[RMDB]
RNA sequence: GGGAACGACUCGAGUAGAGUCGAAAAGUCCUGCCAUGAGACCGCAACGAGAGCAUGUCGUAUCGAAUGGACUCGGGGAGUCGGCAGCUUGCCCCACGGAUGAGCGCCUAAUGCCGGCAUUCGGGAAAAUAGACUGGAUAGUUCGCUAUCCAGUCAACCCCGUAUAGAACUUCGGUUCUAUACGGGGAAAAGAAACAACAACAACAAC
Reactivity to 2A3 in 0.01 (KOAc 150mM, MgCl2 10mM, bicine 150mM(pH8.5), 24C), signal-to-noise 3, nucleotides 027 to 156: g040u020c000c010u000g050c020c020a040u110g030a020g010a050c020c020g060c060a080a080c070g070a030g010a000g130c090a070u110g020u190c010g030u070a100u070c080g020a070a020u040g000g060a030c010u020c030g010g000g010g010a150g030u040c020g020g000c000a010g000c020u050u040g040c000c030c040c020a070c050g020g050a170u070g010a020g050c030g000c000c060u120a090a030u130g040c020c000g040g020c030a020u040u100c040g020g000g060a020a120a010a070u140a060g010a000c000u000g000g000a000u000a000g010u010u020c060g020c130u000a000u000c000c000a000g010u010c000a000a000
Conditions: 150 mM KOAc, 10 mM MgCl2 and 150 mM bicine (pH 8.5), 24 C. An RNA of 207 nucleotides, treated with 2A3 and read out base by base.